[RMDB]
RNA sequence: GGGAACGACUCGAGUAGAGUCGAAAAGCAAGGACGGAUGGCACUGCGCGUCGUGUCUUCCCUUCGAGGUGCCCGACACGGUUGUGCCUCCCGUGGCGGAGAGAGCCGUCGACGGCGACACGAGCUACGUGACGGAUGAUUUCGAUCAUCCGUCACGAAAAGAAACAACAACAACAAC
Reactivity to 2A3 in 0.01 (KOAc 150mM, MgCl2 10mM, bicine 150mM(pH8.5), 24C), signal-to-noise 2, nucleotides 027 to 126: g090c000a030a080g090g040a070c030g010g080a070u060g050g030c040a000c070u130g010c070g000c020g130u090c000g020u000g010u040c010u050u160c020c000c000u040u050c090g040a170g040g010u050g020c030c000c010g000a000c020a010c030g000g090u090u080g070u130g080c030c000u020c000c030c000g080u070g040g020c100g030g000a040g020a000g010a030g060c000c030g070u030c010g040a050c020g000g000c060g000a000c000a020c000g030a030g000c010u080a050
Reactivity to DMS in 0.01 (KOAc 150mM, MgCl2 10mM, bicine 150mM(pH8.5), 24C), signal-to-noise 2, nucleotides 027 to 126: g010c130a160a150g000g040a050c030g000g020a090u000g000g020c030a100c040u000g000c080g020c070g030u000c020g000u000g000u010c020u000u000c190c040c030u040u030c110g000a110g000g020u000g000c030c020c000g000a140c150a000c000g010g000u010u010g020u010g040c060c010u000c030c010c010g050u020g010g010c040g000g000a180g000a090g020a160g000c000c000g010u000c050g000a150c250g000g010c230g000a050c040a050c040g000a180g010c090u000a110